[RMDB]
Chemical mapping of a 177-nucleotide RNA with DMS and 2A3.
For DMS the reverse transcriptase was MarathonRT.

RNA sequence: GGGAACGACUCGAGUAGAGUCGAAAAGAUAUGGAAUGUCUACCCACCGCUACAACGUCGAUGAGUCGGAAACGACGAGACGCUGUAGCGAGGACAUUCCUAAGUCAAACACCGGUUCGCCGGUGAACGGUUGUGUAGUGUUCGCACUACACAACCGAAAAGAAACAACAACAACAAC
Reactivity to DMS in 0.01 (KOAc 150mM, MgCl2 10mM, bicine 150mM(pH8.5), 24C), signal-to-noise 1, nucleotides 027 to 126: g000a110u000a300u000g000g000a000a010u000g000u000c010u010a160c060c010c010a300c040c000g030c000u000a000c000a000a020c000g070u000c000g000a070u020g010a180g030u000c000g000g000a080a020a070c000g000a000c000g000a220g000a000c000g060c000u010g030u000a000g000c000g000a010g000g000a000c010a010u000u000c000c010u000a050a050g000u000c100a120a110a210c010a000c000c000g000g010u000u000c110g000c000c000g000g020u000g000a020a080
Reactivity to 2A3 in 0.01 (KOAc 150mM, MgCl2 10mM, bicine 150mM(pH8.5), 24C), signal-to-noise 1, nucleotides 027 to 126: g160a040u250a260u240g000g010a030a000u000g000u000c020u130a300c010c010c020a010c010c010g000c000u010a010c000a010a000c010g000u050c000g190a300u220g080a100g080u010c010g090g000a160a050a030c000g000a000c000g070a000g000a010c000g000c060u020g000u010a000g000c000g000a000g080g000a000c000a010u020u000c000c000u000a040a010g100u050c070a090a130a130c010a000c010c000g040g040u050u090c300g060c000c000g000g000u000g010a010a010

For 2A3 the reverse transcriptase was SuperScript II with manganese.
The RNA was probed in 150 mM KOAc, 10 mM MgCl2 and 150 mM bicine (pH 8.5) at 24 C.